[RMDB]
RNA sequence: GGGAACGACUCGAGUAGAGUCGAAAACUGUCACACUCAUUAUAGAAUCCAGAAUAUGCCGAAUGGAGCAGAGCGAUGCCUCAUUUUCUCAUUUUAUUGGAAAAUACCUCCUCCUCCUACUCUGCUGAGCGGUAUAGCCGUUCGCGGCUAUACCGCUAAAAGAAACAACAACAACAAC
Reactivity to 2A3 in 0.01 (KOAc 150mM, MgCl2 10mM, bicine 150mM(pH8.5), 24C), signal-to-noise 1, nucleotides 027 to 126: c020u020g010u250c000a020c000a000c000u070c020a070u000u140a010u020a170g040a000a110u020c000c000a020g180a170a080u300a070u160g110c000c000g040a070a100u080g000g000a000g040c040a000g000a050g040c070g050a070u200g100c000c000u050c010a040u050u000u040u010c170u030c100a110u090u120u000u050a160u000u000g000g000a030a030a030a030u150a060c000c000u020c020c000u000c000c030u000c000c000u030a070c000u000c040u000g000c020u010g070

The data come from the RNA Mapping Database (RMDB), library OK1LIB. Chemical mapping of a 177-nucleotide RNA with 2A3. The reactions ran in a buffer of 150 mM KOAc, 10 mM MgCl2 and 150 mM bicine (pH 8.5), at 24 C. For 2A3, 337 sequencing reads were counted. For 2A3 the reverse transcriptase was SuperScript II with manganese.